[RMDB]
RNA sequence: GGGAACGACUCGAGUAGAGUCGAAAACUCAAUGUAGGGAAUAACAUUGAAUUGAUACAAAUACCUUUUUCGGUGUAGGGAAAAACACCGAAUUGAUACAAAUACCUUUCUAAAUGUAGGGAAUAACAAAACAGGCAUCGCUUCGGCGAUGCCUGAAUCUGAUUUGUGUGUUCGCACACAAAUCAGAAAAAGAAACAACAACAACAAC
Reactivity to 2A3 in 0.01 (KOAc 150mM, MgCl2 10mM, bicine 150mM(pH8.5), 24C), signal-to-noise 1, nucleotides 027 to 156: c020u010c000a020a010u020g010u020a040g090g090g030a120a150u110a080a040c000a000u020u020g030a050a010u070u100g040a040u100a190c090a090a150a040u210a070c000c010u000u020u000u020u000c000g010g020u000g000u000a020g000g010g080a100a190a040a000a000c000a000c000c000g000a020a000u000u000g000a000u020a020c020a000a140a050u080a080c000c030u020u010u080c020u190a100a180a100u070g010u040a090g000g030g050a050a000u120a130a040c020a010a080a000a000c000a000g000g030c000a000u000c000g020c020u040u060c190g070g000c000g000a000u000g020c000c000u000g000a000a000

Description: The record gives the reactivity of an RNA of 207 nucleotides to 2A3. Conditions: 150 mM KOAc, 10 mM MgCl2 and 150 mM bicine (pH 8.5), 24 C. The 2A3 profile rests on 560 reads.